This 207-nucleotide RNA was probed chemically with 2A3. The reactions ran in a buffer of 150 mM KOAc, 10 mM MgCl2 and 150 mM bicine (pH 8.5), at 24 C. For 2A3 the reverse transcriptase was SuperScript II with manganese.
[RMDB]
RNA sequence: GGGAACGACUCGAGUAGAGUCGAAAAGUCGGAACAUCACGACGGCGGGCCGGUGGGGAAUCAGGGGGCUACCGUGGGAUAGCGAUGAGACAGCCCCUCCGAUGGCACCAAGCGUCGGAUCGCGGAAAACACUGUAAGCCCUUCGGGGCUUACAGAACUAUGUGCACUAGUUCGCUAGUGCACAUAGAAAAGAAACAACAACAACAAC
Reactivity to 2A3 in 0.01 (KOAc 150mM, MgCl2 10mM, bicine 150mM(pH8.5), 24C), signal-to-noise 1, nucleotides 027 to 156: g050u020c000g040g030a040a040c000a130u070c030a010c170g030a010c030g020g000c010g040g020g000c110c030g040g030u110g040g020g000g000a050a120u070c000a040g030g040g000g050g020c020u030a050c030c030g040u070g060g160g050a090u120a020g010c050g060a090u000g000a040g040a030c030a050g040c030c010c000c000u000c000c000g050a050u040g150g040c030a040c080c010a050a090g030c010g020u020c010g000g000a020u030c040g000c040g040g010a020a000a020a090c130a000c000u000g000u000a000a000g000c000c000c000u000u020c080g050g010g030g000c010u000u020a000c000a000g000a000a000
Reactivities are rounded to 0.1 and cut off at 0 and 3.